[RMDB]
RNA sequence: GGGAACGACUCGAGUAGAGUCGAAAACUUCUCUCGUCUUCUUCGGUCAACCUCCGAAGUUCCUCUUCCUCUUCCCUGCUGAGGGACUUUCCCCCGGAGGAGAGCUGCCUCUUCUUGUUCUCCAGGGCCUUUGUUUAUAGUUCGCUAUAAACAAAGGAAAAGAAACAACAACAACAAC
Reactivity to DMS in 0.01 (KOAc 150mM, MgCl2 10mM, bicine 150mM(pH8.5), 24C), signal-to-noise 3, nucleotides 027 to 126: c110u010u000c020u000c020u000c070g010u000c030u000u000c020u010u000c040g020g010u000c070a090a140c110c040u000c030c030g010a090a060g000u000u000c000c010u000c030u000u000c020c040u000c060u000u010c010c010c010u000g010c060u000g010a050g020g010g000a050c060u000u000u000c010c020c010c080c050g000g020a050g000g010a080g010a080g010c060u000g000c040c010u000c020u000u010c020u000u000g000u010u000c020u000c000c050a100g010g000g000
Reactivity to 2A3 in 0.01 (KOAc 150mM, MgCl2 10mM, bicine 150mM(pH8.5), 24C), signal-to-noise 1, nucleotides 027 to 126: c020u080u050c010u030c010u000c030g060u050c060u060u000c010u060u050c050g010g030u040c050a060a040c000c020u000c010c020g040a030a010g020u000u010c000c010u020c010u040u020c010c020u000c010u050u020c000c010c020u020g030c020u050g030a020g000g000g010a020c040u080u080u060c020c010c010c030c010g040g010a020g020g010a010g010a000g010c030u040g030c010c000u030c000u070u000c020u030u030g020u030u010c010u000c010c010a010g030g040g000